[RMDB]
RNA sequence: GGGAACGACUCGAGUAGAGUCGAAAAUUCGUCGUUGUGACGCUGGUCAACAGCACAGACCAGACGAAGAACACAGUCUUGACCGUUGGUCGUGACUAUCGGUUCCUCAAUCCGACAACCGUUGAGACCCCACGGUGAAUUUCGAUUCACCGUGGGGAAAAGAAACAACAACAACAAC
Reactivity to 2A3 in 0.01 (KOAc 150mM, MgCl2 10mM, bicine 150mM(pH8.5), 24C), signal-to-noise 2, nucleotides 027 to 126: u010u010c070g060u050c040g040u020u130g050u060g100a040c030g000c000u000g030g000u110c030a110a190c070a230g110c060a010c120a060g060a000c000c000a010g030a060c000g020a070a000g040a070a010c070a000c020a110g020u010c010u050u090g000a000c000c030g210u090u210g010g020u010c020g070u100g070a040c000u000a100u180c120g060g000u010u130c020c000u020c030a000a030u050c000c050g000a010c020a030a000c040c060g000u030u000g010a020g010a060
Background:
Chemical mapping of a 177-nucleotide RNA with 2A3. Conditions: 150 mM KOAc, 10 mM MgCl2 and 150 mM bicine (pH 8.5), 24 C. For 2A3, 852 sequencing reads were counted. The data come from the RNA Mapping Database (RMDB), library OK1LIB.